[RMDB]
RNA sequence: GGGAACGACUCGAGUAGAGUCGAAAAGAAAAACGGUUUUGGAUCGAACCGUAAACGAUCCGGUAAAGAAAAGAAAACCGGCCAAGGUGAGGGCCGGCUCACCUUAAGAAAAGGGGAAACCCGAAAACCCUAAUGAAUUCUUCGGAAUUCAUUAGGGAAAAGAAACAACAACAACAAC
Reactivity to 2A3 in 0.01 (KOAc 150mM, MgCl2 10mM, bicine 150mM(pH8.5), 24C), signal-to-noise 4, nucleotides 027 to 126: g020a000a070a020a000a000c020g020g030u030u020u010u110g140g040a070u120c050g020a030a010c020c010g010u050a030a040a020c050g010a050u020c010c020g000g000u140a130a100a020g080a140a090a030a030g120a030a060a010a020c010c010g010g020c050c050a030a000g010g000u010g000a000g010g040g010c000c000g000g000c000u000c000a000c000c010u010u020a050a030g060a080a120a020a000g000g010g000g020a050a020a040c000c010c000g010a040a070a020a010
Reactivity to DMS in 0.01 (KOAc 150mM, MgCl2 10mM, bicine 150mM(pH8.5), 24C), signal-to-noise 3, nucleotides 027 to 126: g000a050a050a070a060a100c010g010g030u000u000u000u020g000g000a050u010c030g040a080a010c060c040g020u020a060a090a140c100g000a040u000c000c010g040g000u020a080a090a110g000a180a040a100a060g020a060a030a200a090c020c000g000g000c130c090a040a030g000g000u000g000a020g000g010g010c050c040g000g000c000u000c010a020c010c000u000u000a070a120g000a040a060a090a080g020g010g000g000a060a080a200c000c000c000g000a090a090a150a090

Chemical mapping of a 177-nucleotide RNA with 2A3 and DMS. The RNA was probed in 150 mM KOAc, 10 mM MgCl2 and 150 mM bicine (pH 8.5) at 24 C. Values cover nucleotides 27 to 126.